RNA sequence: GGGAACGACUCGAGUAGAGUCGAAAAGACUUUUUUGCGCACCCUAAACCGGAUGAAUGACAAGGUCUCCGGUUACCGCUACAGCGGUGAUGUGCUGUUGGGCGGACGCAGCAUCUUCAACUACCGCGUUCUCUACUCGUUUCGACGAGUAGAGAACAAAAGAAACAACAACAACAAC
Reactivity to DMS in 0.01 (KOAc 150mM, MgCl2 10mM, bicine 150mM(pH8.5), 24C), signal-to-noise 2, nucleotides 027 to 126: g010a090c050u000u000u000u010u000u000g010c040g020c070a110c000c010c040u000a070a050a040c020c010g000g000a040u040g010a040a090u010g000a170c280a040a120g020g010u000c000u000c010c000g030g000u000u000a020c050c020g000c010u000a060c150a140g000c020g030g010u030g000a030u010g000u000g020c010u020g010u000u010g010g000g010c000g000g040a150c140g010c010a020g010c080a040u000c070u020u000c150a050a150c140u000a110c060c040g000c100
Reactivity to 2A3 in 0.01 (KOAc 150mM, MgCl2 10mM, bicine 150mM(pH8.5), 24C), signal-to-noise 3, nucleotides 027 to 126: g020a010c060u000u040u070u040u300u260g020c030g050c020a120c030c000c000u030a080a050a000c000c000g020g050a070u160g080a100a110u120g110a220c090a080a060g300g020u020c000u020c000c020g040g000u010u010a040c000c000g050c050u120a090c060a020g010c010g000g030u100g050a190u170g070u130g030c010u000g050u060u080g030g020g010c010g000g010a000c030g000c020a000g040c000a010u020c040u150u050c030a090a110c060u080a120c010c030g070c030